Conditions: 150 mM KOAc, 10 mM MgCl2 and 150 mM bicine (pH 8.5), 24 C. Chemical mapping of a 207-nucleotide RNA with 2A3. Values cover nucleotides 27 to 156. 2A3 adducts were read by reverse transcription with SuperScript II with manganese. The data come from the RNA Mapping Database (RMDB), library OK3TST. The 2A3 profile rests on 501 reads.

RNA sequence: GGGAACGACUCGAGUAGAGUCGAAAACAUGGCACCACAUACCCCUGUUUAUCCGAUGGAAUGACGGCGCAUUUCUCGUGCGUGUACACCGUCUCGAGUAUGUCGUAGACAUGGAAGUCCAGAGGGCUUCCGUGGGUGUCUGCCUCCGGCCUUGCCGAGACUUACACAGCUUCGGCUGUGUAAGUCUAAAAGAAACAACAACAACAAC
Reactivity to 2A3 in 0.01 (KOAc 150mM, MgCl2 10mM, bicine 150mM(pH8.5), 24C), signal-to-noise 1, nucleotides 027 to 156: c130a070u070g050g020c000a000c000c000a010c030a010u070a110c010c000c000c000u040g160u110u170u070a190u040c030c070g050a120u080g000g090a150a120u080g050a060c010g000g080c000g040c010a040u080u100u060c200u080c090g040u000g000c000g000u000g110u120a050c040a000c020c050g000u000c030u030c040g020a070g000u050a000u050g050u060c040g110u080a010g020a100c010a000u030g040g040a010a000g000u000c020c010a070g070a240g220g000g010c040u010u020c000c010g020u010g000g020g030u040g000u030c010u040g040c000c000u090c030c050g000g010c050c110u090u170g040c000c000g040